[RMDB]
An RNA of 177 nucleotides, treated with DMS and 2A3 and read out base by base. The DMS profile rests on 4,085 reads. Conditions: 150 mM KOAc, 10 mM MgCl2 and 150 mM bicine (pH 8.5), 24 C. DMS adducts were read by reverse transcription with MarathonRT. It was measured as part of the RMDB library OK2TST.
RNA sequence: GGGAACGACUCGAGUAGAGUCGAAAAGGAACCAGCCGGACCAGGUCGAUGUUCAGCAGGCCGUUGGCCAGCGAAGCCGCCUUGACCUCGAUAUGGUCGGCGAGGCGGAACGACAGCUUGAAGGCGAGAUAGCAGUGCUAUUCGUAGCACUGCUAUCAAAAGAAACAACAACAACAAC
Reactivity to DMS in 0.01 (KOAc 150mM, MgCl2 10mM, bicine 150mM(pH8.5), 24C), signal-to-noise 4, nucleotides 027 to 126: g000g020a150a150c030c040a210g020c040c010g000g020a210c190c110a040g010g010u000c020g020a130u010g010u000u000c080a120g040c040a080g010g010c020c020g000u020u000g040g030c010c010a040g000c020g010a100a120g020c010c010g010c020c000u010u010g000a050c010c000u010c150g000a130u000a080u020g000g010u000c030g010g000c100g000a010g010g000c010g010g000a060a100c040g010a080c110a080g010c050u000u000g000a260a100g000g000c010g000a120
Reactivity to 2A3 in 0.01 (KOAc 150mM, MgCl2 10mM, bicine 150mM(pH8.5), 24C), signal-to-noise 4, nucleotides 027 to 126: g040g000a040a110c030c020a000g000c000c010g020g050a050c030c030a020g020g020u000c010g050a100u100g080u090u100c050a040g030c020a020g030g050c020c060g200u280u300g030g010c000c020a000g000c010g020a060a000g050c000c000g040c020c000u070u140g060a300c020c000u040c070g070a100u100a130u300g170g010u070c040g030g000c020g000a010g010g000c000g000g010a010a010c020g030a010c020a050g100c020u060u090g040a060a000g010g010c010g010a010